Structure probing data (2A3 and DMS) for a 177-nucleotide construct. For DMS, 2,707 sequencing reads were counted. Values cover nucleotides 27 to 126.

[RMDB]
RNA sequence: GGGAACGACUCGAGUAGAGUCGAAAACGAUCUGCUAGAUGAUCCAUGCAGUACACUAGCGUGAUCCUAGGCUAGGUACCUAUAUGAGAGAUCAUGGAUCACGCCAUGGUACGUACCUAGUCGAUCAGAUCCCAUGCAAAUUCGUUUGCAUGGGAUCAAAAGAAACAACAACAACAAC
Reactivity to 2A3 in 0.01 (KOAc 150mM, MgCl2 10mM, bicine 150mM(pH8.5), 24C), signal-to-noise 5, nucleotides 027 to 126: c050g010a020u010c010u040g010c030u020a070g020a270u110g030a100u040c020c030a100u220g060c050a020g070u080a060c070a030c050u030a010g000c030g060u030g000a010u010c030c030u080a080g000g020c010u030a020g000g030u060a030c000c040u130a110u060a080u300g150a130g020a010g010a090u030c010a030u050g000g000a030u120c060a010c080g060c020c000a030u040g020g000u050a040c020g000u010a010c000c000u000a010g000u000c020g000a040u030c010a010
Reactivity to DMS in 0.01 (KOAc 150mM, MgCl2 10mM, bicine 150mM(pH8.5), 24C), signal-to-noise 3, nucleotides 027 to 126: c140g010a010u010c030u000g010c010u000a030g000a160u000g010a180u000c070c050a150u000g020c140a120g000u000a090c100a120c060u000a030g000c000g000u010g010a040u000c010c130u010a080g000g010c010u000a040g010g000u010a030c020c050u010a070u000a070u010g010a130g010a190g000a080u000c000a040u000g010g000a060u000c090a110c200g000c010c030a010u010g020g000u000a000c070g000u000a020c030c000u000a010g000u000c130g000a060u020c130a120